[RMDB]
RNA sequence: GGGAACGACUCGAGUAGAGUCGAAAACUAGAUAGCUAGUACGAUCAGUACUCUAGCAUGCACGCGACGAUCUAGAGACGUCAUACACAUGGCACUAGUCAUGCGUACGGAUCGCGUACUGGUACUCGUCACGUAGCAUGUUCGCAUGCUACGUGACAAAAGAAACAACAACAACAAC
Reactivity to 2A3 in 0.01 (KOAc 150mM, MgCl2 10mM, bicine 150mM(pH8.5), 24C), signal-to-noise 2, nucleotides 027 to 126: c000u020a030g070a180u130a060g110c030u000a000g030u010a020c000g070a120u130c080a050g060u100a190c010u040c020u020a010g080c060a040u140g060c080a090c120g140c060g110a100c050g050a090u020c010u030a000g010a010g020a050c070g040u020c020a020u030a020c080a010c000a020u030g010g000c020a060c280u180a100g020u010c010a000u030g000c030g000u010a010c090g010g000a040u070c050g000c040g130u030a010c020u000g040g000u060a040c100u070c110
Reactivity to DMS in 0.01 (KOAc 150mM, MgCl2 10mM, bicine 150mM(pH8.5), 24C), signal-to-noise 2, nucleotides 027 to 126: c040u000a040g030a080u020a080g030c020u000a000g020u000a020c010g020a060u020c110a130g020u000a060c000u000c080u000a020g030c110a040u000g020c050a080c050g020c120g000a090c060g010a080u000c010u000a020g010a060g000a070c000g010u050c030a050u010a040c010a030c030a030u000g010g000c010a190c300u010a060g020u000c010a000u010g010c020g000u000a010c050g000g000a020u010c140g020c070g030u000a060c020u010g000g000u000a050c250u000c090